[RMDB]
About this RNA
Source: RMDB libraries RFM100 and RFMREP, as collected in RNAgym. Chemical mapping of a 177-nucleotide RNA with DMS and 2A3. Values are in units of 0.01, from 0 to 300, in steps of 10.
RNA sequence: GGGAACGACUCGAGUAGAGUCGAAAAGGCAACAUGAAAGGACACGUGCAAGACCUGAAAAGGUCACUUGUAGGGCACGCAGACGCAAGCAAAAAGCACGUUCAAGACUUGAAAUAGCUUUGAAGUUACCAUAUGCGGAAUUCGUUCCGCAUAUGGUAAAAGAAACAACAACAACAAC
Reactivity to DMS in 0.01 (KOAc 150mM, MgCl2 10mM, bicine 150mM(pH8.5), 24C), signal-to-noise 2, nucleotides 027 to 126: g000g000c040a080a080c270a060u040g010a080a100a030g020g000a050c070a010c000g000u000g000c010a060a090g010a030c000c010u010g000a090a060a180a020g000g010u000c020a050c020u000u030g030u000a200g000g000g000c060a080c130g000c160a020g010a090c190g000c020a020a070g000c040a050a020a060a180a060g000c020a010c020g000u000u000c050a060a060g000a030c020u010u020g000a070a080a050u010a120g010c020u020u020u020g000a120a090g000u030u010
Reactivity to 2A3 in 0.01 (KOAc 150mM, MgCl2 10mM, bicine 150mM(pH8.5), 24C), signal-to-noise 3, nucleotides 027 to 126: g040g000c030a050a010c000a120u070g060a130a010a030g030g020a040c020a000c090g000u000g000c000a020a050g000a020c010c000u040g010a020a050a050a080g010g000u000c000a000c020u000u010g000u090a160g020g060g020c120a050c130g080c000a020g000a030c030g000c020a000a040g020c050a000a010a010a100a000g010c020a010c000g000u000u020c030a020a010g050a120c010u000u010g030a050a050a090u070a040g010c000u070u020u140g060a100a040g000u020u020
As a SHAPE reagent, 2A3 marks flexible, mostly unpaired nucleotides at the ribose 2'-OH. DMS (dimethyl sulfate) methylates the pairing face of unpaired adenines and cytosines. The reactions ran in a buffer of 150 mM KOAc, 10 mM MgCl2 and 150 mM bicine (pH 8.5), at 24 C.